[RMDB]
RNA sequence: GGGAACGACUCGAGUAGAGUCGAAAAGAUAUGGAUCUGAACUACAGGAGGGUCAGACCGUUGAUCUAAUAUCGGAAACGAUAUUAGGGAGGUCUGUGAAAGCCCUGCAGAUCCUAAGUCAAACUCUGCAACUUCGGUUCGCCGAAGUUGCAGAGAAGUAUACUGUGUGCUUCGGCACACAGUAUACAAAAGAAACAACAACAACAAC
Reactivity to 2A3 in 0.01 (KOAc 150mM, MgCl2 10mM, bicine 150mM(pH8.5), 24C), signal-to-noise 2, nucleotides 027 to 156: g020a010u050a030u110g010g000a020u000c010u010g040a080a230c120u220a130c240a070g070g060a050g030g080g060u130c000a000g000a000c020c000g070u080u020g000a000u010c000u000a010a000u000a000u000c000g020g010a060a070a030c010g000a000u000a000u010u000a010g000g000g010a010g000g010u000c010u020g000u030g040a150a040a010g050c000c000c030u040g000c000a000g000a020u020c000c000u010a100a010g020u010c020a020a010a070c000u000c000u000g000c020a000a040c000u010u010c030g070g030u060u100c250g070c110c000g000a010a000g000u000u000g000c000a010g000a000g000a000a000